[RMDB]
RNA sequence: GGGAACGACUCGAGUAGAGUCGAAAAUGGUUAGCAGCAUGAUAUAUCAGGGGCAUACCAGGGUUGUUGCUUUAUCAGCAAUUCACUAAACUGAUAGGACCCCCCUACAACCUGUAAUAUGUUCCAGAACAUUGGGAAACUUCGGUUUCCCAAUGUUAAAAGAAACAACAACAACAAC
Reactivity to DMS in 0.01 (KOAc 150mM, MgCl2 10mM, bicine 150mM(pH8.5), 24C), signal-to-noise 2, nucleotides 027 to 126: u020g010g010u000u010a070g000c070a060g000c030a060u020g010a050u010a100u010a110u020c110a140g000g010g010g020c010a030u010a000c040c080a250g020g000g000u000u010g030u000u000g000c090u010u010u020a020u000c010a010g010c050a160a110u010u010c210a080c180u010a030a140a180c030u020g000a020u000a040g000g000a300c030c000c010c000c020c010u000a010c020a000a010c000c000u010g010u020a080a090u000a010u000g010u010u000c000c000a150g000